[RMDB]
RNA sequence: GGGAACGACUCGAGUAGAGUCGAAAAGCGCAGCCAACACCAAGUAGACGGGCGACCUCACUGAUCGCUGCCCACUCCGAAUCGUGCUGACCGCGGAUCUCUGCGACCAUCCGCACCGCCCGCUCACCUGGGGUAAUAUGUUCGCAUAUUACCCCAGAAAAGAAACAACAACAACAAC
Reactivity to 2A3 in 0.01 (KOAc 150mM, MgCl2 10mM, bicine 150mM(pH8.5), 24C), signal-to-noise 2, nucleotides 027 to 126: g010c040g000c010a000g040c020c020a020a030c050a050c040c010a070a050g070u060a040g130a100c040g000g020g000c010g030a070c010c020u040c010a060c050u060g040a080u100c080g010c050u040g040c040c000c000a040c030u020c030c020g080a080a080u100c010g060u050g010c040u020g020a060c030c050g040c030g040g020a060u070c130u000c040u180g010c030g060a060c010c010a030u040c010c000g030c000a020c000c020g040c010c010c010g030c020u000c020a050c010
Reactivity to DMS in 0.01 (KOAc 150mM, MgCl2 10mM, bicine 150mM(pH8.5), 24C), signal-to-noise 4, nucleotides 027 to 126: g040c080g010c030a050g020c080c090a050a070c090a110c100c090a080a100g010u000a070g000a090c060g000g000g020c020g020a120c120c030u000c070a040c080u010g000a030u000c070g030c040u000g000c000c000c010a120c110u020c040c030g010a070a070u010c070g010u000g010c030u000g030a060c090c070g010c020g010g010a070u000c110u020c030u010g000c030g000a060c070c080a050u010c040c010g000c060a080c120c050g000c020c020c020g000c090u010c070a080c140